An RNA of 207 nucleotides, treated with 2A3 and read out base by base.
It was measured as part of the RMDB library M2RFPK.

[RMDB]
RNA sequence: GGGAACGACUCGAGUAGAGUCGAAAACGGCAUUUCCCCAGCAGCCAUGACCUACCAGGCUGCGGUGCGGCUCGCCGCACAGGUCAUCCCUCAUCGGGCGCGUCCUGCGUCCUUCCACGCCAACACAAGACCAUUGCUUCCUUCGGGAAGCAAUGAACGGAAUUAUCCUCUUCGGAGGAUAAUUCCGAAAAGAAACAACAACAACAAC
Reactivity to 2A3 in 0.01 (KOAc 150mM, MgCl2 10mM, bicine 150mM(pH8.5), 24C), signal-to-noise 1, nucleotides 027 to 156: c030g050g000c060a120u020u060u130c010c000c020c010a050g000c000a000g000c020c010a180u150g020a050c000c010u120a230c080c110a010g000g040c000u000g000c000g000g020u000g000c000g020g030c030u110c140g170c050c000g000c010a010c010a010g000g020u000c000a090u150c010c020c000u090c000a120u140c100g010g000g000c000g010c000g060u250c020c090u120g030c000g030u030c010c000u050u010c010c040a060c040g020c000c040a120a010c070a080c050a190a010g070a070c060c000a000u000u000g010c000u000u010c000c000u010u080c140g110g000g040a000a000g040c000a000a000u000g000a010a000